[RMDB]
Source: RMDB library RNAMAK, as collected in RNAgym.
Chemical mapping of a 207-nucleotide RNA with DMS and 2A3.
2A3 adducts were read by reverse transcription with SuperScript II with manganese.
For 2A3, 3,596 sequencing reads were counted.
For DMS the reverse transcriptase was MarathonRT.
For DMS, 2,659 sequencing reads were counted.

RNA sequence: GGGAACGACUCGAGUAGAGUCGAAAAUGCUGGUUCGCCAGCACCACAGGGGUCUGAUGACCACCCACAGGCUUUGAUCUAUACUGAAGCCUCCACGGUAUAGGGAGCCUGAUGGGUGCAAGGACGGAGGCACCCGAGUAUAGCCUUUCGAGGCUAAGAUAUACGAUGUUUUCGAACAUCGUAUAUCAAAAGAAACAACAACAACAAC
Reactivity to DMS in 0.01 (KOAc 150mM, MgCl2 10mM, bicine 150mM(pH8.5), 24C), signal-to-noise 1, nucleotides 027 to 156: u000g030c000u000g010g010u000u000c300g040c020c000a040g010c000a020c030c020a080c070a060g010g000g030g020u000c020u010g010a160u020g020a050c300c010a010c000c040c000a100c060a060g000g030c010u020u000u000g010a020u000c020u010a020u000a030c040u020g010a040a090g010c000c000u000c020c010a300c080g000g000u000a040u000a020g000g000g000a030g020c010c000u010g020a070u000g020g020g000u010g000c030a010a070g000g020a030c040g010g020a070g040g020c010a140c000c020c010g010a140g030u010a110u000a030g000c050c000u000u000u010c270g000a020g020g020c010u010a020a090
Reactivity to 2A3 in 0.01 (KOAc 150mM, MgCl2 10mM, bicine 150mM(pH8.5), 24C), signal-to-noise 3, nucleotides 027 to 156: u100g000c000u000g000g060u050u060c160g080c100c000a010g000c000a020c010c000a050c010a010g000g010g050g010u010c010u010g060a220u030g010a170c000c000a000c000c000c000a000c010a000g000g010c010u300u290u010g000a000u000c000u000a000u000a000c010u020g080a220a050g020c000c000u000c000c000a010c010g000g000u000a000u000a000g000g000g000a010g000c010c000u000g010a030u000g000g000g000u000g000c000a050a060g010g000a000c000g000g000a000g000g010c000a000c000c000c010g010a020g050u080a140u100a200g000c010c000u110u160u190c300g110a020g000g000c010u010a020a060